[RMDB]
RNA sequence: GGGAACGACUCGAGUAGAGUCGAAAAGAGCAGUUCGCUGCUCCAGACGCGUACUACGCAAUAAGACAGGAGGUACCUCCCCACCAUCGUCCCAAAUAGGACGAUGAGGGUACGCUCCAAUGACGUUGCGUAUCGCUUAAGCUCGCUUCGGCGAGAAGACUAUUAUAAAAUUCGUUUUAUAAUAGUCAAAAGAAACAACAACAACAAC
Reactivity to 2A3 in 0.01 (KOAc 150mM, MgCl2 10mM, bicine 150mM(pH8.5), 24C), signal-to-noise 5, nucleotides 027 to 156: g010a000g000c010a010g010u090u230c240g080c110u000g000c000u000c010c000a090g090a210c110g020c020g040u130a120c050u010a000c020g000c000a000a010u130a120a080g140a090c040a050g000g000a020g010g010u010a000c000c000u070c020c030c000c000a020c000c000a000u000c000g000u010c010c010c000a170a300a120u300a090g010g000a000c010g000a010u010g000a000g030g000g010u000a010c060g140c100u000c000c020a010a030u090g020a030c090g000u000u000g000c000g010u010a030u300c000g000c000u050u050a060a010g030c000u000c000g000c000u050u100c260g100g000c000g000a000g010a020a010
Reactivity to DMS in 0.01 (KOAc 150mM, MgCl2 10mM, bicine 150mM(pH8.5), 24C), signal-to-noise 3, nucleotides 027 to 156: g000a010g060c010a040g020u000u000c300g030c010u010g030c010u000c020c050a080g010a120c140g010c010g020u010a090c110u000a030c000g030c000a050a050u000a070a130g000a190c030a060g020g040a030g000g020u000a030c020c010u000c160c080c020c070a300c140c000a020u000c000g030u000c010c000c040a060a190a250u010a050g000g010a040c000g000a030u000g010a220g000g010g020u000a010c020g010c000u000c000c010a130a050u010g010a090c100g030u000u000g000c010g010u010a070u000c010g000c040u000u000a060a140g010c000u000c000g020c010u000u000c280g060g020c030g020a030g000a060a110
Notes: This 207-nucleotide RNA was probed chemically with 2A3 and DMS. For DMS, 5,373 sequencing reads were counted. Values cover nucleotides 27 to 156. High DMS reactivity at an A or C suggests that its Watson-Crick edge is free. Conditions: 150 mM KOAc, 10 mM MgCl2 and 150 mM bicine (pH 8.5), 24 C. It was measured as part of the RMDB library RNAMAK. DMS adducts were read by reverse transcription with MarathonRT.